[RMDB]
RNA sequence: GGGAACGACUCGAGUAGAGUCGAAAACACUAACCUAAUUUCCGAGACAUUUUACAUGCCUGAAACAUGUCUUAGAAAUUAUGGUUUUUCUUGGUUUGUGUGCUGAACAAAGUAGAUUCCUUGUACCGAAAUAGAAGAGGUUCGCCUCUUCUAUUUCAAAAGAAACAACAACAACAAC
Reactivity to 2A3 in 0.01 (KOAc 150mM, MgCl2 10mM, bicine 150mM(pH8.5), 24C), signal-to-noise 2, nucleotides 027 to 126: c030a010c040u030a010a000c000c000u000a000a010u000u020u000c010c010g020a000g000a000c010a010u020u060u020u080a060c050a060u220g220c010c130u070g030a070a020a030c060a010u000g000u000c000u000u010a010g010a000a000a010u030u010a060u110g010g000u000u030u020u030u000c040u050u080g100g000u020u060u070g040u030g010u020g010c030u040g020a060a030c040a080a130a030g040u070a070g040a170u030u040c010c010u040u090g070u060a070c050c050
Reactivity to DMS in 0.01 (KOAc 150mM, MgCl2 10mM, bicine 150mM(pH8.5), 24C), signal-to-noise 6, nucleotides 027 to 126: c070a090c160u010a030a020c000c000u000a020a010u010u000u000c000c000g000a000g010a020c000a010u010u000u000u000a110c070a100u000g020c200c130u020g010a070a050a070c190a010u000g010u010c000u000u000a040g000a010a010a010u010u000a010u010g010g010u000u000u000u000u010c060u020u010g010g010u000u000u000g010u000g010u000g010c070u000g010a060a080c120a050a060a080g010u010a080g010a140u000u000c010c010u000u010g020u000a100c250c120
Conditions: 150 mM KOAc, 10 mM MgCl2 and 150 mM bicine (pH 8.5), 24 C. An RNA of 177 nucleotides, treated with 2A3 and DMS and read out base by base. Reactivities are given for positions 27 through 126. For DMS the reverse transcriptase was MarathonRT. For 2A3 the reverse transcriptase was SuperScript II with manganese.